[RMDB]
RNA sequence: GGGAACGACUCGAGUAGAGUCGAAAAUAUUUGUGAACAGUGACCGACAGUUAAUCUUUGACAUUUACAAUGUACACAUCUACAACAAGGAGAUGGACAAUUUUGACGAAGGAUGCAUAAGUGUGUUAGAAGAGACUGCUGAGAGACACAUGCUGUGCACACGACACUGGUUCGCCAGUGUCGUGUGAAAAGAAACAACAACAACAAC
Reactivity to 2A3 in 0.01 (KOAc 150mM, MgCl2 10mM, bicine 150mM(pH8.5), 24C), signal-to-noise 2, nucleotides 027 to 156: u240a100u060u220u060g080u010g010a060a050c020a080g020u010g080a090c020c050g000a030c030a010g000u010u070a100a210u090c070u060u140u120g030a020c020a000u070u120u080a060c080a060a110u130g010u000a050c040a050c010a080u000c060u110a120c040a120a040c010a180a000g080g000a020g020a000u120g000g050a040c040a110a170u070u120u070u080g000a000c030g090a040a060g040g020a030u010g010c010a010u010a220a090g010u020g000u000g010u030u010a030g020a060a000g000a000g000a050c050u020g000c020u030g000a050g000a010g000a100c020a000c000a040u070g010c010u030g110u050g000
An RNA of 207 nucleotides, treated with 2A3 and read out base by base.
It was measured as part of the RMDB library OK3TST.
Values cover nucleotides 27 to 156.
Conditions: 150 mM KOAc, 10 mM MgCl2 and 150 mM bicine (pH 8.5), 24 C.